[RMDB]
Source: RMDB library TTRDES, as collected in RNAgym. Chemical mapping of a 177-nucleotide RNA with DMS and 2A3. The DMS profile rests on 2,136 reads. Conditions: 150 mM KOAc, 10 mM MgCl2 and 150 mM bicine (pH 8.5), 24 C. DMS (dimethyl sulfate) methylates the pairing face of unpaired adenines and cytosines. For DMS the reverse transcriptase was MarathonRT. Values are in units of 0.01, from 0 to 300, in steps of 10.

RNA sequence: GGGAACGACUCGAGUAGAGUCGAAAAGAUAUGGACCCAGUGUGCUUCAACAGCUAACAUCGGAAACGAUGUUAGACAUGAAGGACACGGGUCCUAAGUCAAAUCUCGCUCCUUCGGGAGCGAGAAACACUAACGACAGGUUCGCCUGUCGUUAGUGAAAAGAAACAACAACAACAAC
Reactivity to DMS in 0.01 (KOAc 150mM, MgCl2 10mM, bicine 150mM(pH8.5), 24C), signal-to-noise 2, nucleotides 027 to 126: g020a060u000a300u010g030g000a010c000c010c000a150g040u000g020u000g010c000u010u000c000a060a050c300a170g020c010u000a000a000c010a010u000c000g000g000a150a140a230c020g020a000u000g010u000u000a010g000a040c070a230u000g010a000a000g000g000a010c000a010c010g010g000g020u010c000c000u000a000a050g000u000c100a110a110a090u010c000u000c010g000c020u000c000c020u000u040c230g010g000g000a010g000c000g000a000g000a030a040a130
Reactivity to 2A3 in 0.01 (KOAc 150mM, MgCl2 10mM, bicine 150mM(pH8.5), 24C), signal-to-noise 2, nucleotides 027 to 126: g010a000u080a030u190g000g030a010c050c100c170a190g020u020g000u040g190c000u000u030c030a150a190c080a280g000c000u020a000a000c000a000u010c000g000g050a010a020a050c010g020a010u010g010u010u000a000g020a000c000a090u090g010a020a000g060g010a010c010a000c000g000g020g000u000c000c000u030a110a020g000u000c020a130a060a120u020c000u000c000g000c000u000c010c010u070u110c300g150g000g000a000g000c030g000a000g010a010a010a020